[RMDB]
RNA sequence: GGGAACGACUCGAGUAGAGUCGAAAAGGGCGGAACACCCAGCUGGGAGUGCGCGCUGGCCGGCCUGGACCAAGAGUGCGGUGCGCAGAUCGAUGCAGUGCUGUGGCAGUCGGAAGCAUUCACCGACCCUCUACUGGGCGUUCGCGCCCAGUAGAGGAAAAGAAACAACAACAACAAC
Reactivity to DMS in 0.01 (KOAc 150mM, MgCl2 10mM, bicine 150mM(pH8.5), 24C), signal-to-noise 1, nucleotides 027 to 126: g000g040g060c010g030g000a140a040c070a210c220c000c010a040g000c110u020g000g000g050a080g020u030g020c030g040c050g000c000u010g010g010c000c000g020g000c050c040u010g040g030a190c030c000a050a070g010a060g030u000g000c020g000g010u000g020c020g000c080a070g030a090u040c090g010a170u020g000c060a010g000u020g000c000u000g050u000g010g020c070a020g030u040c010g000g010a270a060g010c060a010u000u030c010a170c020c000g000a070c070
Reactivity to 2A3 in 0.01 (KOAc 150mM, MgCl2 10mM, bicine 150mM(pH8.5), 24C), signal-to-noise 2, nucleotides 027 to 126: g000g000g040c040g040g030a000a000c000a080c110c000c000a050g070c010u010g030g040g000a050g080u140g080c070g000c020g000c090u060g200g040c000c010g070g080c000c060u130g010g000a050c000c000a100a030g020a100g100u100g090c100g000g050u030g040c010g020c000a010g060a100u150c060g000a000u000g020c060a010g080u000g070c000u120g000u120g100g000c000a030g050u010c000g000g020a030a010g000c070a020u030u050c020a040c040c000g000a030c000
An RNA of 177 nucleotides, treated with DMS and 2A3 and read out base by base. For DMS the reverse transcriptase was MarathonRT. The DMS profile rests on 1,519 reads. It was measured as part of the RMDB library OK1LIB.